[RMDB]
RNA sequence: GGGAACGACUCGAGUAGAGUCGAAAAAGAAUGGAUUUAAUGUUUGGAUACAGCCAAAAGUCAUUUCAUUACCAAACCAUGGGGUGAAUAUACCAUGUAAAGCAGUUUGGGAUCAGAACUCACAGUCUGAAUUGUAAGUGAUGAGACUGCUGUCUCAGGUAAUGGAUUACUUCGGUAAUCCAUUACCAAAAGAAACAACAACAACAAC
Reactivity to DMS in 0.01 (KOAc 150mM, MgCl2 10mM, bicine 150mM(pH8.5), 24C), signal-to-noise 2, nucleotides 027 to 156: a080g010a080a090u000g020g000a110u000u000u000a070a070u000g010u000u000u010g000g030a170u010a070c130a060g000c020c030a010a030a050a130g010u000c020a080u000u000u000c020a050u000u000a180c050c020a030a070a050c060c030a060u000g040g010g030g040u000g000a070a130u000a120u000a110c010c010a030u000g010u000a090a090a150g010c030a050g010u000u000u000g010g020g020a120u000c040a060g000a150a080c020u010c100a080c050a090g010u040c070u000g000a040a090u000u000g030u000a030a060g010u000g020a130u000g000a110g010a070c050u010g000c020u010g000u000c030u000c050a230
Reactivity to 2A3 in 0.01 (KOAc 150mM, MgCl2 10mM, bicine 150mM(pH8.5), 24C), signal-to-noise 3, nucleotides 027 to 156: a000g120a040a030u090g000g070a040u070u090u210a120a060u130g060u040u070u050g050g010a050u050a120c050a010g040c050c050a070a050a030a020g020u010c020a010u000u010u030c020a010u050u090a060c020c000a010a010a020c030c010a020u030g000g000g030g010u190g140a150a010u140a010u030a040c000c010a000u030g040u120a060a130a050g090c030a000g020u020u010u030g010g010g000a010u050c000a000g040a070a040c040u050c110a030c040a050g040u010c000u030g050a120a090u080u100g070u110a070a070g030u020g020a020u010g010a010g020a040c030u040g020c030u040g040u010c000u000c030a010